The data come from the RNA Mapping Database (RMDB), library OK1LIB. This 177-nucleotide RNA was probed chemically with 2A3 and DMS. The RNA was probed in 150 mM KOAc, 10 mM MgCl2 and 150 mM bicine (pH 8.5) at 24 C. The DMS profile rests on 24,007 reads.
RNA sequence: GGGAACGACUCGAGUAGAGUCGAAAAGACUGGCAGGCACGGUACCGUUCAAGCCAGAGUACCUCUACCGUGCAUAUGCUUUUUUUUUUUUAGCAUAUGCGCAUAGCCUGCGAAGGUAGAAAAUAGAGGGUAGCCUUUACUUCGGUGGAGGCUACCCAAAAGAAACAACAACAACAAC
Reactivity to 2A3 in 0.01 (KOAc 150mM, MgCl2 10mM, bicine 150mM(pH8.5), 24C), signal-to-noise 9, nucleotides 027 to 126: g060a030c030u050g040g000c000a010g020g010c030a020c120g030g020u060a070c030c050g070u100u180c150a130a040g050c020c030a020g020a040g020u020a030c000c010u030c030u040a040c040c050g010u010g010c000a000u000a000u000g000c000u030u050u060u010u020u020u020u010u010u010u000u060a000g010c000a000u000a000u000g000c000g000c000a010u060a020g010c000c010u010g000c010g010a030a010g030g010u090a020g140a050a090a030a030u170a030g120a110
Reactivity to DMS in 0.01 (KOAc 150mM, MgCl2 10mM, bicine 150mM(pH8.5), 24C), signal-to-noise 6, nucleotides 027 to 126: g020a080c020u000g000g000c000a030g020g010c050a160c090g010g000u030a040c090c040g020u020u020c120a080a110g010c110c050a060g000a090g010u010a090c020c010u010c070u000a060c130c060g010u010g020c000a000u000a000u000g010c000u000u000u000u010u000u000u000u010u020u010u040u000a020g000c000a000u000a010u010g000c000g040c030a040u030a060g010c060c030u000g010c050g000a050a040g010g010u010a030g000a040a050a050a060u030a070g010a300